Record summary
Conditions: 150 mM KOAc, 10 mM MgCl2 and 150 mM bicine (pH 8.5), 24 C. An RNA of 177 nucleotides, treated with 2A3 and DMS and read out base by base. DMS adducts were read by reverse transcription with MarathonRT. For 2A3 the reverse transcriptase was SuperScript II with manganese. Source: RMDB libraries RFM100 and RFMREP, as collected in RNAgym.
RNA sequence: GGGAACGACUCGAGUAGAGUCGAAAAAACGUAUGAUAGGCAAGAGUAAAGAAAACGCAUUAAUCAAGCGUAGUAUAAGGUGGCAUGCGAUUAUGCAAACAUCGAGGUCCUGGAAAAACCGAUGUAAGGACAUUUGAUUUUUCGAAAUCAAAUGUCCAAAAGAAACAACAACAACAAC
Reactivity to 2A3 in 0.01 (KOAc 150mM, MgCl2 10mM, bicine 150mM(pH8.5), 24C), signal-to-noise 4, nucleotides 027 to 126: a000a000c100g020u040a050u100g030a080u020a050g050g000c030a030a060g040a040g100u200a090a050a050g090a050a110a010a000c020g000c010a020u110u120a080a120u080c090a090a020g000c000g000u030a010g040u040a080u040a100a030g110g010u040g020g000c020a020u080g010c010g030a060u140u110a040u210g000c010a010a060a030c010a020u010c010g000a020g060g000u040c000c000u050g080g030a030a020a000a000a010c020c020g010a000u040g050u070a030a010
Reactivity to DMS in 0.01 (KOAc 150mM, MgCl2 10mM, bicine 150mM(pH8.5), 24C), signal-to-noise 4, nucleotides 027 to 126: a070a090c060g010u010a040u020g000a060u030a050g000g020c080a090a070g010a090g020u020a080a100a080g020a050a090a110a040c100g010c010a050u010u040a090a100u000c160a100a130g010c010g030u000a070g000u010a050u030a030a070g000g030u000g000g000c060a050u030g010c050g020a090u010u020a050u060g020c030a050a070a050c030a010u000c030g020a100g030g000u000c010c010u000g000g000a060a080a020a060a090c060c040g000a030u010g010u010a090a070